[RMDB]
Description: Chemical mapping of a 207-nucleotide RNA with 2A3. The 2A3 profile rests on 1,192 reads. It was measured as part of the RMDB library M2RFPK. The RNA was probed in 150 mM KOAc, 10 mM MgCl2 and 150 mM bicine (pH 8.5) at 24 C.
RNA sequence: GGGAACGACUCGAGUAGAGUCGAAAAACGUCGUCGGCGUAUGUACGCAUACGCCGGCGACGAAGGCCUUCUGGUGAUGUUUCUGGCCACCCAGGAGGUCUUGAGGAAGAGGUGGACGGCCAGACAAAAAAGUCUUCUAACUUCGGUUAGAAGACAAGAAUAUAGACUACUUCGGUAGUCUAUAUUCAAAAGAAACAACAACAACAAC
Reactivity to 2A3 in 0.01 (KOAc 150mM, MgCl2 10mM, bicine 150mM(pH8.5), 24C), signal-to-noise 2, nucleotides 027 to 156: a000c020g010u010c000g000u000c010g000g030c020g010u040a000u010g090u100a030c180g010c060a000u000a000c010g030c190c000g000g000c000g010a000c000g000a000a010g000g000c000c000u010u000c000u000g050g040u120g040a140u010g100u100u210u030c000u000g000g010c000c000a000c010c000c000a000g000g000a010g000g010u020c040u010u070g050a010g040g020a040a060g000a040g020g060u120g020g040a030c030g020g000c010c000a000g010a000c050a010a110a010a000a000a020g000u000c000u000u010c000u000a000a000c000u040u060c130g050g010u010u010a010g020a000a000g000a000c000a000a000